[RMDB]
Chemical mapping of a 177-nucleotide RNA with 2A3 and DMS.
The reactions ran in a buffer of 150 mM KOAc, 10 mM MgCl2 and 150 mM bicine (pH 8.5), at 24 C.
RNA sequence: GGGAACGACUCGAGUAGAGUCGAAAAAAGGGAGUCUUUGGCCCAAGACAAUGGGAAGGUGGGCUUAGAAGCAGCCACCCUUUAACGAGUUCGUAACAGAUCACCCAUCGAGGUCAGAGGCACCUAAUAAUUGUUGAUGAUUCGUCAUCAACAAUUAAAAAGAAACAACAACAACAAC
Reactivity to 2A3 in 0.01 (KOAc 150mM, MgCl2 10mM, bicine 150mM(pH8.5), 24C), signal-to-noise 8, nucleotides 027 to 126: a010a010g070g010g000a220g010u000c000u000u000u000g000g000c010c000c010a010a020g080a020c070a030a020u010g000g000g010a010a010g020g000u040g010g020g000c000u010u010a040g010a050a000g010c020a000g010c000c000a020c010c000c000u000u050u020a020a010c020g010a010g030u030u030c010g000u010a010a000c000a000g000a010u010c000a020c000c000c000a010u020c040g030a080g010g000u000c000a000g000a000g010g000c010a010c000c000u020a030a020
Reactivity to DMS in 0.01 (KOAc 150mM, MgCl2 10mM, bicine 150mM(pH8.5), 24C), signal-to-noise 9, nucleotides 027 to 126: a080a050g010g000g000a060g030u000c000u000u010u000g000g000c010c000c190a110a100g000a070c300a120a010u000g000g000g010a040a020g000g020u000g000g000g000c010u000u010a090g010a110a130g010c210a040g000c000c010a030c030c000c020u000u000u010a070a080c300g000a080g000u010u000c010g010u000a110a100c150a170g000a030u000c040a150c000c000c000a030u000c030g000a070g020g010u000c000a010g000a020g010g000c010a030c010c000u010a040a080
For DMS the reverse transcriptase was MarathonRT.